[RMDB]
RNA sequence: GGGAACGACUCGAGUAGAGUCGAAAAUGGCAAUUUAAUAUGGGGUGAACGGGGCUACCACUCGAAAAGAUUCUUUGCCAACUAUUUUGAUGUUAUUGACCCAUCUCAAGGGUAUGAGAAAUAUGUGGGACUCUAAGUCCUUCGGGACUUAGAGUCCAAAAGAAACAACAACAACAAC
Reactivity to 2A3 in 0.01 (KOAc 150mM, MgCl2 10mM, bicine 150mM(pH8.5), 24C), signal-to-noise 1, nucleotides 027 to 126: u240g000g000c000a010a000u020u000u140a160a150u160a120u150g000g000g050g020u000g000a070a000c080g000g000g070g000c020u050a040c000c070a020c000u140c120g070a040a000a000a240g070a240u160u000c060u030u000u010g000c000c040a110a080c160u020a240u270u070u050u020g110a120u300g080u300u020a240u030u170g020a000c000c000c020a000u100c000u000c020a000a040g060g000g090u020a140u160g010a020g060a000a110a000u160a010u040g090u020g090
The data come from the RNA Mapping Database (RMDB), library OK1LIB. An RNA of 177 nucleotides, treated with 2A3 and read out base by base. Reactivities are given for positions 27 through 126. The RNA was probed in 150 mM KOAc, 10 mM MgCl2 and 150 mM bicine (pH 8.5) at 24 C.